This 177-nucleotide RNA was probed chemically with DMS and 2A3. Values cover nucleotides 27 to 126. Conditions: 150 mM KOAc, 10 mM MgCl2 and 150 mM bicine (pH 8.5), 24 C. For DMS the reverse transcriptase was MarathonRT. The DMS profile rests on 81,759 reads. 2A3 adducts were read by reverse transcription with SuperScript II with manganese.
RNA sequence: GGGAACGACUCGAGUAGAGUCGAAAAUUCGCCAUUAUGACUGGAAUGGCGCAAUGCAGCCGAUGGUCAGUAAGAUGCUUGGGGCUGACGGGGUGACUGCGGGUAGCGUCCUGCUGGUUGAUAGCGAUCAUAUUAGUAUGUUCGCAUACUAAUAUGAAAAAGAAACAACAACAACAAC
Reactivity to DMS in 0.01 (KOAc 150mM, MgCl2 10mM, bicine 150mM(pH8.5), 24C), signal-to-noise 9, nucleotides 027 to 126: u000u000c010g020c000c020a030u000u000a070u010g020a070c080u000g010g010a050a030u000g010g010c000g010c180a060a060u010g010c060a050g010c020c020g010a210u010g010g010u000c020a050g010u010a100a120g000a110u010g010c080u000u000g010g010g010g010c030u000g000a050c050g010g000g000g010u010g010a050c040u000g010c040g000g000g010u000a110g010c060g000u000c020c040u000g010c020u000g000g010u000u000g010a080u000a050g010c050g010a130
Reactivity to 2A3 in 0.01 (KOAc 150mM, MgCl2 10mM, bicine 150mM(pH8.5), 24C), signal-to-noise 9, nucleotides 027 to 126: u050u010c010g030c010c010a020u070u050a120u200g100a040c050u060g040g070a060a030u040g020g000c010g000c040a030a080u120g010c010a010g020c010c020g080a090u100g100g010u030c010a010g030u060a070a050g060a110u140g040c050u070u090g060g010g070g000c010u010g010a020c030g060g000g010g010u120g040a090c020u030g010c010g030g030g050u060a030g020c010g030u020c000c010u030g010c010u030g030g030u030u050g040a070u060a030g030c020g020a040